The record gives the reactivity of an RNA of 177 nucleotides to 2A3 and DMS.
The reactions ran in a buffer of 150 mM KOAc, 10 mM MgCl2 and 150 mM bicine (pH 8.5), at 24 C.
For DMS the reverse transcriptase was MarathonRT.
[RMDB]
RNA sequence: GGGAACGACUCGAGUAGAGUCGAAAAUGAAUGCCUGAAUGAACACUGGUUCAGUGACGUCAGUCAUGCCAGGAAAACCAUCAGUGAAUGGCGUCAGGAUUAUAAUGAGUACCGCCCGCACUCCGCGAUCUCUGUAUCCUUUCGAGGAUACAGAGAUAAAAGAAACAACAACAACAAC
Reactivity to 2A3 in 0.01 (KOAc 150mM, MgCl2 10mM, bicine 150mM(pH8.5), 24C), signal-to-noise 3, nucleotides 027 to 126: u100g060a050a090u160g070c000c000u010g050a000a080u060g050a140a000c080a030c110u050g070g010u170u150c090a050g080u030g030a010c000g000u160c050a100g010u010c000a030u040g010c000c010a040g050g070a010a070a000a090c020c010a020u040c010a020g200u010g300a300a020u020g010g000c000g030u010c000a000g020g010a020u070u120a070u110a190a160u110g030a000g050u040a040c000c030g050c010c010c000g010c000a030c020u040c030c000g110c080g070
Reactivity to DMS in 0.01 (KOAc 150mM, MgCl2 10mM, bicine 150mM(pH8.5), 24C), signal-to-noise 4, nucleotides 027 to 126: u010g000a100a050u010g010c020c000u000g000a040a060u010g010a090a110c190a160c020u000g000g020u010u020c130a100g040u000g010a020c000g000u020c300a090g010u000c010a030u010g000c030c030a030g000g010a060a050a070a120c040c010a010u000c040a250g000u000g000a080a040u000g000g000c030g000u000c000a040g010g000a050u010u000a100u010a100a090u010g000a080g010u000a090c060c070g000c030c030c020g000c160a030c040u010c030c270g000c180g000